[RMDB]
RNA sequence: GGGAACGACUCGAGUAGAGUCGAAAACCACCGCAAUUCGUUGCGGUGGGAAGGUGCAAAUCGCUGUCUGCACCACAGACGGCCAAUCCGUCAAAGCGAAAACUGGAGGGUCAUUCGUGACCCUCAACACAUCUCUGUGUUUCGACACAGAGAUGUGAAAAGAAACAACAACAACAAC
Reactivity to DMS in 0.01 (KOAc 150mM, MgCl2 10mM, bicine 150mM(pH8.5), 24C), signal-to-noise 3, nucleotides 027 to 126: c010c000a000c000c020g010c010a000a020u000u010c200g020u000u000g000c010g000g030u000g010g000g020a040a040g020g010u010g000c020a010a110a080u000c070g050c020u010g010u000c030u000g010c000a030c030c010a040c070a110g000a000c010g000g000c150c300a130a150u000c020c000g000u010c020a040a300a030g010c000g000a070a040a120a070c160u010g000g000a010g000g000g010u000c000a020u000u000c230g000u010g010a010c000c000c000u000c000a010a100
Reactivity to 2A3 in 0.01 (KOAc 150mM, MgCl2 10mM, bicine 150mM(pH8.5), 24C), signal-to-noise 4, nucleotides 027 to 126: c000c000a000c000c000g000c000a010a040u080u080c200g070u130u020g000c010g010g010u020g000g000g000a030a050g000g020u020g010c020a030a140a300u060c030g000c040u050g060u090c050u050g000c000a000c000c000a010c010a010g000a000c000g000g020c100c080a030a070u110c010c000g000u010c030a040a020a000g020c010g000a020a020a010a100c110u160g140g000a010g010g000g000u010c000a010u060u100c150g090u040g010a010c010c000c000u000c000a000a000